The record gives the reactivity of an RNA of 177 nucleotides to DMS and 2A3.
The DMS profile rests on 6,322 reads.
It was measured as part of the RMDB library TTRDES.
Values cover nucleotides 27 to 126.
The 2A3 profile rests on 2,028 reads.
For DMS the reverse transcriptase was MarathonRT.
RNA sequence: GGGAACGACUCGAGUAGAGUCGAAAAGAUAUGGAAUACUGCAUCGCGAUAAGAUGUGGUCGGAAACGACCAUACAUCUUUUGACGCGAUGGUAUUCCUAAGUCAAACAUCUACUUCGGUAGAUGAACAUUUUAAAGGUCUUCGGACCUUUAAAAUGAAAAGAAACAACAACAACAAC
Reactivity to DMS in 0.01 (KOAc 150mM, MgCl2 10mM, bicine 150mM(pH8.5), 24C), signal-to-noise 4, nucleotides 027 to 126: g010a020u000a290u010g000g010a020a000u000a000c010u020g020c060a010u000c000g040c000g010a110u010a020a010g010a020u010g040u000g000g000u000c000g000g010a060a060a110c010g000a010c000c000a100u000a070c030a030u000c000u010u000u000u000g000a180c120g020c010g010a000u000g010g000u000a000u010u010c000c000u000a010a090g000u000c030a180a130a270c000a000u000c000u000a010c000u000u010c230g030g020u000a000g010a010u000g000a140a230
Reactivity to 2A3 in 0.01 (KOAc 150mM, MgCl2 10mM, bicine 150mM(pH8.5), 24C), signal-to-noise 1, nucleotides 027 to 126: g010a000u020a030u060g000g020a010a000u010a020c030u160g300c000a040u000c000g000c000g150a060u060a300a030g000a020u000g010u020g000g000u000c020g000g000a030a050a010c020g020a020c000c000a030u060a020c010a000u040c000u100u120u100u230g300a200c130g010c020g000a020u010g010g000u000a010u000u010c000c010u020a040a020g050u000c030a120a000a210c000a000u000c000u020a020c000u020u070c300g160g000u030a010g000a010u000g010a070a000
The RNA was probed in 150 mM KOAc, 10 mM MgCl2 and 150 mM bicine (pH 8.5) at 24 C.